[RMDB]
RNA sequence: GGGAACGACUCGAGUAGAGUCGAAAAAAAACUGCACACAAGUAUUUAUACUAGCUUUAUUUGUGAUAGUCCAAAACUGGAAAUAACCUGAAUAACCUCAACUAGUGAAUGCUUAAACUCUACACGUCCAUGUUCUGGAAUACUACUCAGCAAUGUACACACGGGGUAUAUUCGUAUACCCCGUGUGAAAAGAAACAACAACAACAAC
Reactivity to 2A3 in 0.01 (KOAc 150mM, MgCl2 10mM, bicine 150mM(pH8.5), 24C), signal-to-noise 1, nucleotides 027 to 156: a000a000a000a000c100u100g010c080a050c000a000c000a050a010g020u010a080u040u120u090a100u050a100c040u030a030g040c030u000u080u030a050u060u070u010g020u010g070a090u110a060g040u000c010c000a000a120a040a040c070u050g000g050a020a030a020u050a030a020c000c020u000g040a070a040u030a030a030c030c030u030c030a020a010c030u050a000g040u010g170a020a010u020g000c000u000u030a070a000a000c050u020c030u070a000c040a020c020g010u000c020c000a010u060g020u020u000c000u020g000g030a000a000u080a150c030u020a000c000u030c050a040g170c000a040a130u300g070u170a020